[RMDB]
RNA sequence: GGGAACGACUCGAGUAGAGUCGAAAAGGCAAACUAGUUAUAGCUAAGGUGUUUCACUACGUUAUAACUUAAAUUAAAGUGCCACAGAGACGAAUCUAUUUAGAAAUAAAUAGAGUGAAACGCGGUAUGACUCUAAUAGGUUCGCCUAUUAGAGUCAAAAAGAAACAACAACAACAAC
Reactivity to 2A3 in 0.01 (KOAc 150mM, MgCl2 10mM, bicine 150mM(pH8.5), 24C), signal-to-noise 5, nucleotides 027 to 126: g040g000c030a050a070a060c060u050a020g000u010u000a000u000a020g010c000u020a170a260g010g010u070g050u080u230u280c030a000c010u040a010c030g010u010u000a000u000a010a000c000u010u060a010a040a000u110u150a120a070a040g060u020g000c010c010a030c020a030g070a000g020a030c030g020a030a050u000c000u000a010u000u000u010a030g010a020a040a000u020a010a010a000u000a000g020a010g010u020g030a100a130a000c070g010c080g090g020u140a080
Reactivity to DMS in 0.01 (KOAc 150mM, MgCl2 10mM, bicine 150mM(pH8.5), 24C), signal-to-noise 5, nucleotides 027 to 126: g030g000c040a040a100a100c160u010a030g010u000u000a000u000a010g020c010u030a080a140g020g020u010g000u040u010u050c030a050c010u000a220c200g000u000u000a010u000a010a010c000u000u010a050a070a120u030u060a070a120a120g030u010g000c010c000a140c140a110g000a140g010a040c010g000a100a130u000c000u000a000u000u000u000a000g000a080a050a110u000a000a010a000u000a010g000a010g000u010g000a050a050a030c030g010c190g000g020u020a120
This 177-nucleotide RNA was probed chemically with 2A3 and DMS. DMS adducts were read by reverse transcription with MarathonRT. Source: RMDB libraries RFM100 and RFMREP, as collected in RNAgym. For 2A3 the reverse transcriptase was SuperScript II with manganese. Conditions: 150 mM KOAc, 10 mM MgCl2 and 150 mM bicine (pH 8.5), 24 C.